Record summary
This 207-nucleotide RNA was probed chemically with 2A3 and DMS.

[RMDB]
RNA sequence: GGGAACGACUCGAGUAGAGUCGAAAAACAAGCGUUGAGGUGAAAUAAGGUCUUAGCCUUGCUUUUGAGUUUUGGAAGAUGAGCGAAGUAGGGUGAAGUAGUCAUCUUUGCUAAGCAUGUAGAGGUCUUUGUGGGAUUAUUUUUGGACAGGGGUUCGCAAAUAUUCCCGGUUCGCCGGGAAUAUUUGAAAAGAAACAACAACAACAAC
Reactivity to 2A3 in 0.01 (KOAc 150mM, MgCl2 10mM, bicine 150mM(pH8.5), 24C), signal-to-noise 2, nucleotides 027 to 156: a010c070a060a040g030c060g050u040u070g030a040g010g020u030g030a090a080a140u140a080a000g040g010u000c020u040u080a020g020c010c000u000u040g000c030u070u060u050u120g120a100g020u020u020u100u120g060g010a060a040g020a040u070g000a000g040c030g010a040a010g010u080a040g040g030g010u060g020a040a030g040u100a020g040u010c020a030u010c040u030u090u040g030c030u020a030a020g000c010a010u040g000u040a030g020a040g070g000u010c020u020u090u100g030u070g000g010g040a010u040u070a050u040u190u030u060u030g030g020a020c010a030g050g010g000g000u050u060c010g000
Reactivity to DMS in 0.01 (KOAc 150mM, MgCl2 10mM, bicine 150mM(pH8.5), 24C), signal-to-noise 1, nucleotides 027 to 156: a040c020a050a070g020c100g030u000u000g000a080g030g000u020g000a040a110a140u000a090a120g030g000u000c030u000u000a110g020c010c020u020u000g020c030u000u000u000u000g010a130g030u010u000u000u000g020g020a070a130g000a120u010g020a140g020c060g030a080a100g040u000a050g030g030g070u000g010a040a120g040u000a080g000u000c030a020u000c010u000u000u000g030c030u000a050a100g000c030a090u000g010u000a060g010a070g040g020u010c030u000u010u000g040u000g000g020g040a090u000u000a080u000u010u020u010u010g010g010a060c010a110g010g020g000g010u000u000c020g000

Record summary
For 2A3, 1,383 sequencing reads were counted. Conditions: 150 mM KOAc, 10 mM MgCl2 and 150 mM bicine (pH 8.5), 24 C. In probing experiments dimethyl sulfate is read out at A N1 and C N3, which are open when not base-paired. For DMS, 2,952 sequencing reads were counted.